[RMDB]
RNA sequence: GGGAACGACUCGAGUAGAGUCGAAAAUCAUCGGUACGAUCACGUACGUAGAUCACGUGUGGCCGGCCCGCGGCCAGCGAUGACAUCGUACUCACGUACUAGUAGGCCCGGCGCGAUCCGAUCUGCGGUCUCAUAGGUUGUUCGCAACCUAUGAGACAAAAGAAACAACAACAACAAC
Reactivity to 2A3 in 0.01 (KOAc 150mM, MgCl2 10mM, bicine 150mM(pH8.5), 24C), signal-to-noise 3, nucleotides 027 to 126: u090c020a000u060c070g030g010u020a010c010g070a240u100c090a010c140g000u020a010c010g000u030a130g050a270u020c000a010c000g080u300g020u060g060g000c000c000g000g070c020c110c050g250c040g010g000c000c000a000g000c010g140a210u030g020a030c010a070u070c030g010u010a010c010u010c030a060c020g010u050a010c000u030a050g090u050a050g020g050c030c000c000g000g020c040g020c010g010a060u000c040c040g050a080u000c000u140g070c070g090
Reactivity to DMS in 0.01 (KOAc 150mM, MgCl2 10mM, bicine 150mM(pH8.5), 24C), signal-to-noise 3, nucleotides 027 to 126: u020c060a120u000c110g000g020u000a020c000g000a180u000c120a100c180g000u000a010c000g000u000a070g010a160u000c030a030c010g010u010g020u010g020g020c000c010g000g000c060c050c040g000c020g030g020c000c000a110g000c010g000a090u000g000a030c040a200u000c030g000u000a010c000u000c230a090c030g010u000a010c010u000a060g010u000a100g020g010c020c010c010g000g010c050g010c060g000a050u000c080c060g000a080u000c040u000g010c200g020